Conditions: 150 mM KOAc, 10 mM MgCl2 and 150 mM bicine (pH 8.5), 24 C. Structure probing data (DMS and 2A3) for a 177-nucleotide construct. The DMS profile rests on 5,318 reads. For DMS the reverse transcriptase was MarathonRT.
RNA sequence: GGGAACGACUCGAGUAGAGUCGAAAAUGGACCAGAUGACAAGAAAGCCCACCCACAGGAGGGCUUAUCCAUUCAGUCAGUGGAACAAGGGGGCACAUAUAUGUUGAGACAGGAACUCAAGAGAAGAGGAUAAGUACACAUUCGUGUGUACUUAUCCAAAAGAAACAACAACAACAAC
Reactivity to DMS in 0.01 (KOAc 150mM, MgCl2 10mM, bicine 150mM(pH8.5), 24C), signal-to-noise 6, nucleotides 027 to 126: u010g010g000a140c050c030a130g010a100u020g010a060c100a100a120g010a080a070a020g020c000c000c010a150c020c010c300a090c300a150g010g020a070g010g000g010c010u000u000a030u000c040c070a100u000u010c120a070g000u000c030a040g010u000g010g010a050a110c110a070a110g000g000g000g000g000c120a050c100a040u000a070u000a060u010g000u000u000g010a070g000a050c070a060g000g000a050a040c040u000c040a080a070g000a110g010a090a100g000a200
Reactivity to 2A3 in 0.01 (KOAc 150mM, MgCl2 10mM, bicine 150mM(pH8.5), 24C), signal-to-noise 3, nucleotides 027 to 126: u080g020g020a020c000c000a010g060a180u100g040a000c030a070a060g060a040a020a010g010c020c000c000a020c020c020c010a180c040a030g030g020a030g020g000g020c000u000u020a050u000c010c000a060u050u150c000a000g060u030c010a010g010u060g040g060a100a050c040a150a140g000g000g000g000g010c030a000c020a050u200a000u020a010u070g120u080u050g020a010g000a020c050a060g070g000a020a020c010u020c040a030a030g030a000g010a110a030g050a010